[RMDB]
RNA sequence: GGGAACGACUCGAGUAGAGUCGAAAAUUGGCCAGCACGCCGUCAGCCAGGCUGGGUGCGCCGUUGGGGAACGUCUUGGUUGGCUUGUUCCGUUGGGGGCACAUCGCACCCUGAUACUCGUACAGCCUCAACGCUACUCAUUCGUGAGUAGCGUUGAAAAAGAAACAACAACAACAAC
Reactivity to 2A3 in 0.01 (KOAc 150mM, MgCl2 10mM, bicine 150mM(pH8.5), 24C), signal-to-noise 1, nucleotides 027 to 126: u050u070g080g010c020c030a000g080c020a040c080g060c010c020g030u030c020a010g130c020c040a050g000g000c040u060g040g050g000u080g010c010g000c010c030g150u040u150g070g000g000g040a000a050c020g050u000c010u060u140g030g000u100u040g000g060c000u010u130g060u100u020c040c010g020u050u070g000g020g000g000g000c000a000c010a160u100c040g000c070a180c030c000c000u000g020a040u060a100c010u010c090g010u040a080c030a090g010c000c000
Reactivity to DMS in 0.01 (KOAc 150mM, MgCl2 10mM, bicine 150mM(pH8.5), 24C), signal-to-noise 2, nucleotides 027 to 126: u010u000g020g000c030c030a080g030c070a090c090g010c040c040g040u010c060a090g020c070c070a120g010g010c080u000g010g020g040u000g000c080g030c080c030g000u000u000g020g010g030g010a060a040c090g000u000c030u000u000g010g000u000u000g010g000c050u010u020g010u000u000c030c050g010u000u000g000g010g000g010g020c040a120c150a030u010c050g000c020a090c020c010c000u000g000a090u000a050c050u000c070g020u000a080c100a100g000c030c050
Notes:
Structure probing data (2A3 and DMS) for a 177-nucleotide construct. For 2A3 the reverse transcriptase was SuperScript II with manganese. The RNA was probed in 150 mM KOAc, 10 mM MgCl2 and 150 mM bicine (pH 8.5) at 24 C. Reactivities are rounded to 0.1 and cut off at 0 and 3. 2A3 is a SHAPE reagent: it acylates the 2'-hydroxyl of flexible nucleotides of all four kinds. Source: RMDB library OK2TST, as collected in RNAgym. The 2A3 profile rests on 1,375 reads.